An RNA of 177 nucleotides, treated with DMS and read out base by base.

RNA sequence: GGGAACGACUCGAGUAGAGUCGAAAAUAACAAGAGAAGAGAUCACAGAAACGUGAGGAUCAAGAAGCCGGACUACAAGGUCGCCUACGUGCAGCUGGUGCGUGUGAGCUGGCCAGCCCCAGCGGGGCUCUUACAGGCACUUCGGUGCCUGUAAGAGAAAAGAAACAACAACAACAAC
Reactivity to DMS in 0.01 (KOAc 150mM, MgCl2 10mM, bicine 150mM(pH8.5), 24C), signal-to-noise 2, nucleotides 027 to 126: u010a100a070c060a070a060g010a080g000a070a100g030a130g000a120u000c030a030c110a110g030a090a080a120c110g010u010g010a060g000g020a120u000c050a060a080g000a080a080g000c040c050g010g000a100c060u030a090c100a060a110g010g000u000c050g020c010c000u010a050c040g030u000g010c060a110g020c110u000g010g000u000g000c030g010u000g010u010g000a110g010c040u000g010g000c020c070a150g000c030c060c000c050a090g020c100g030g010g010g000
Conditions: 150 mM KOAc, 10 mM MgCl2 and 150 mM bicine (pH 8.5), 24 C. For DMS, 1,388 sequencing reads were counted.